An RNA of 177 nucleotides, treated with 2A3 and DMS and read out base by base. For 2A3, 2,736 sequencing reads were counted. The data come from the RNA Mapping Database (RMDB), library OK1LIB.

[RMDB]
RNA sequence: GGGAACGACUCGAGUAGAGUCGAAAAUUAGUUGCCUGUGUUUCACCAAAACCCAUUUCGUUGACCAAUUUCCGAACAUACGACACUUCCCUCGUUGCCAUGGAAAGUGCCACAUACUCUUACUCUGUAUGAUAGGGAUGUUCGCAUCCCUAUCAUAAAAAGAAACAACAACAACAAC
Reactivity to 2A3 in 0.01 (KOAc 150mM, MgCl2 10mM, bicine 150mM(pH8.5), 24C), signal-to-noise 4, nucleotides 027 to 126: u180u100a030g040u040u060g040c020c030u030g020u030g010u030u040u060c060a040c010c010a020a020a060a090c000c020c020a040u040u100u060c080g020u030u050g050a050c010c030a080a080u060u040u070c030c010g040a060a050c050a070u130a060c080g030a010c020a010c030u050u030c000c000c000u020c050g050u060u090g040c030c000a030u040g030g020a140a080a010g030u040g050c070c010a030c000a020u090a050c020u020c010u050u040a070c030u030c010u070g060
Reactivity to DMS in 0.01 (KOAc 150mM, MgCl2 10mM, bicine 150mM(pH8.5), 24C), signal-to-noise 3, nucleotides 027 to 126: u040u010a060g020u000u000g010c020c020u030g020u010g000u000u000u000c020a070c080c060a000a050a110a090c000c000c000a070u000u020u000c040g000u020u000g010a050c050c030a050a180u010u030u010c010c050g010a100a080c110a060u010a080c070g020a080c160a040c170u000u020c020c000c000u010c040g000u010u010g000c030c030a060u050g000g000a030a040a040g000u010g000c000c030a040c000a080u010a070c030u000c040u000u010a070c050u000c050u000g030

Conditions: 150 mM KOAc, 10 mM MgCl2 and 150 mM bicine (pH 8.5), 24 C. Values are in units of 0.01, from 0 to 300, in steps of 10.